[RMDB]
RNA sequence: GGGAACGACUCGAGUAGAGUCGAAAAAGAUUCAUUCAGUGCACAUGUAUGGGAGGUGCACUUGGAACCACCCAUGGGCUAGCUGUUAAGCCUGCAAUGAUAAGGAGACAAGAUGCCUGCUCACCCAGAGUCAGAACUUUUUCGAAAGUUCUGACUCAAAAGAAACAACAACAACAAC
Reactivity to 2A3 in 0.01 (KOAc 150mM, MgCl2 10mM, bicine 150mM(pH8.5), 24C), signal-to-noise 1, nucleotides 027 to 126: a010g070a110u070u040c040a020u130u040c010a020g000u000g020c010a000c040a060u110g130u290a080u110g070g060g040a040g000g080u000g000c000a000c000u030u060g080g000a050a030c080c000a040c060c010c000a040u070g010g000g020c000u000a060g030c060u090g060u220u050a130a020g010c030c000u010g000c020a030a270u110g060a010u060a050a050g080g020a020g050a000c030a020a030g020a090u080g000c000c020u050g060c040u080c020a110c000c060c050a040
Reactivity to DMS in 0.01 (KOAc 150mM, MgCl2 10mM, bicine 150mM(pH8.5), 24C), signal-to-noise 1, nucleotides 027 to 126: a080g000a200u000u010c120a140u000u020c040a070g010u000g000c000a020c060a070u000g020u000a170u030g010g020g000a130g010g010u010g010c040a000c050u010u010g010g010a120a000c090c070a140c000c000c010a150u000g010g000g000c020u000a080g000c070u010g010u000u040a110a060g010c000c000u000g000c130a040a030u010g050a050u010a120a090g020g030a130g010a020c060a060a050g020a110u010g000c000c000u000g010c040u020c120a120c010c010c050a060